RNA sequence: GGGAACGACUCGAGUAGAGUCGAAAAUAGCAGGACAUAGCCGUUAUGCGUGAAGCGGUGUAGCGUCACUUUGAUGGCGGUACUAUGAAUUGAUGCAAGGUGUGGAGCGACCUUAAACAGUUCUGGUUUGACGGCUUUCAGUUCGCUGAAAGCCGAAACUUCCACUCUGCUUCGGCAGAGUGGAAGUAAAAGAAACAACAACAACAAC
Reactivity to 2A3 in 0.01 (KOAc 150mM, MgCl2 10mM, bicine 150mM(pH8.5), 24C), signal-to-noise 3, nucleotides 027 to 156: u110a000g030c010a010g000g020a030c020a030u010a020g020c000c000g040u030u060a060u110g100c060g030u010g030a040a010g020c040g060g060u230g030u180a040g040c000g020u020c000a010c040u150u140u270g130a120u050g020g010c010g020g000u040a040c020u040a020u050g040a060a050u050u060g080a050u020g020c060a020a000g040g000u030g020u080g050g000a010g010c010g020a000c010c000u120u200a090a020a020c020a020g000u020u000c010u030g080g000u030u070u080g000a030c010g000g000c000u000u000u000c000a010g020u010u090c110g000c110u000g000a020a010a000g000c000c000g000a000a000
Structure probing data (2A3) for a 207-nucleotide construct. For 2A3 the reverse transcriptase was SuperScript II with manganese. It was measured as part of the RMDB library M2RFPK. The 2A3 profile rests on 1,685 reads. Reactivities are given for positions 27 through 156.